Description:
The record gives the reactivity of an RNA of 207 nucleotides to 2A3. For 2A3, 791 sequencing reads were counted. High 2A3 reactivity points to a flexible backbone, as in loops and unpaired stretches. Values are in units of 0.01, from 0 to 300, in steps of 10. Source: RMDB library RNAMAK, as collected in RNAgym.
RNA sequence: GGGAACGACUCGAGUAGAGUCGAAAAGGGGUCUUCGGUAAAUCACUUGGAUUUAGUCUAGAGGUGUAACUGAAGCCUCCACGGUUACACUACCCACCUAGACUUGUCAGUGAUACUCCCGAAGACGGAGGCACCCAAAUACGCGUUCGCGCGUAAACCAACCGGGUAGUUUCGACUACCCGGUUGGAAAAGAAACAACAACAACAAC
Reactivity to 2A3 in 0.01 (KOAc 150mM, MgCl2 10mM, bicine 150mM(pH8.5), 24C), signal-to-noise 1, nucleotides 027 to 156: g020g030g000g000u000c030u010u000c010g000g030u080a160a270a050u010c030a030c050u140u300g210g020a060u280u300u180a020g000u000c000u000a010g000a010g000g000u000g000u000a000a000c000u010g010a050a070g000c000c000u000c000c000a020c000g000g000u000u000a000c000a010c000u010a070c050c090c030a030c010c020u020a010g000a000c020u000u020g000u010c120a110g010u020g000a000u050a160c070u120c060c000c020g000a010a000g000a000c010g000g000a000g000g000c010a030c010c000c000a030a100a100u050a000c000g010c000g010u040u110c160g000c000g050c030g210u040a090a240a030